Conditions: 150 mM KOAc, 10 mM MgCl2 and 150 mM bicine (pH 8.5), 24 C. This 177-nucleotide RNA was probed chemically with DMS and 2A3. Reactivities are rounded to 0.1 and cut off at 0 and 3. It was measured as part of the RMDB libraries RFM100 and RFMREP. High 2A3 reactivity points to a flexible backbone, as in loops and unpaired stretches. For DMS the reverse transcriptase was MarathonRT.
[RMDB]
RNA sequence: GGGAACGACUCGAGUAGAGUCGAAAACCCGUAACUGCGAACAACAUCGUACGUUUCUCCCGUCAAGCAGCCCCUGUUGCUGCCUGACCCUAUUAAGGGAGAUGGGGUGAAGUCAGCCUUAUCACCCCUGCUGAUAAGCUUUCGAGCUUAUCAGCAGAAAAGAAACAACAACAACAAC
Reactivity to DMS in 0.01 (KOAc 150mM, MgCl2 10mM, bicine 150mM(pH8.5), 24C), signal-to-noise 5, nucleotides 027 to 126: c000c010c010g010u020a030a040c040u000g000c000g020a040a120c180a180a140c250a140u010c030g010u010a020c170g010u010u010u020c000u000c010c010c020g010u010c020a020a070g020c000a030g000c000c080c160c200u010g000u040u000g020c000u000g000c000c020u020g000a010c030c270c050u020a090u030u020a130a090g000g000g000a030g000a050u020g010g000g010g040u000g000a030a080g000u020c150a130g010c130c060u010u020a100u000c000a020c000c000c000
Reactivity to 2A3 in 0.01 (KOAc 150mM, MgCl2 10mM, bicine 150mM(pH8.5), 24C), signal-to-noise 8, nucleotides 027 to 126: c010c000c000g000u040a030a020c020u030g010c010g020a070a040c040a070a010c020a250u040c010g020u040a070c110g020u000u070u040c020u010c000c010c010g010u020c000a000a030g000c000a000g000c010c010c000c090u190g110u290u170g020c010u000g000c010c000u000g000a010c010c010c000u200a170u190u220a120a060g010g010g000a010g000a030u080g000g010g000g000u010g020a020a010g080u090c080a050g090c030c020u110u090a070u050c000a020c010c010c000